RNA sequence: GGGAACGACUCGAGUAGAGUCGAAAACCUGUCAUCCGGCGACUCGGAGGCUGGUGUGUGAGGAUGGCUGCGACCGGGAGCCAACCGGCACCUCUGCGCUCAUGGCGAUCGGGCGUCCGCACCGGGCUCGCCAUCAACAUGCGCCCCCUGGAGGAGUACUCUUAUGUAGGUUCGCCUACAUAAGAGUAAAAGAAACAACAACAACAAC
Reactivity to 2A3 in 0.01 (KOAc 150mM, MgCl2 10mM, bicine 150mM(pH8.5), 24C), signal-to-noise 1, nucleotides 027 to 156: c000c000u010g050u060c080a130u000c040c010g000g080c080g100a120c060u070c100g090g020a050g000g000c110u120g030g080u030g000u000g000u010g040a060g010g010a030u000g000g070c060u030g020c060g070a150c000c010g000g070g040a060g080c090c030a020a030c040c010g000g040c030a040c010c070u080c150u160g020c020g000c000u110c090a130u220g070g000c000g070a100u090c050g040g000g030c020g090u150c120c110g000c060a110c040c030g000g010g000c050u070c130g020c000c000a000u010c000a010a010c000a020u090g000c000g040c000c000c000c000c050u010g080g040a030g030g020a050g010u010
This 207-nucleotide RNA was probed chemically with 2A3. 2A3 adducts were read by reverse transcription with SuperScript II with manganese. The reactions ran in a buffer of 150 mM KOAc, 10 mM MgCl2 and 150 mM bicine (pH 8.5), at 24 C.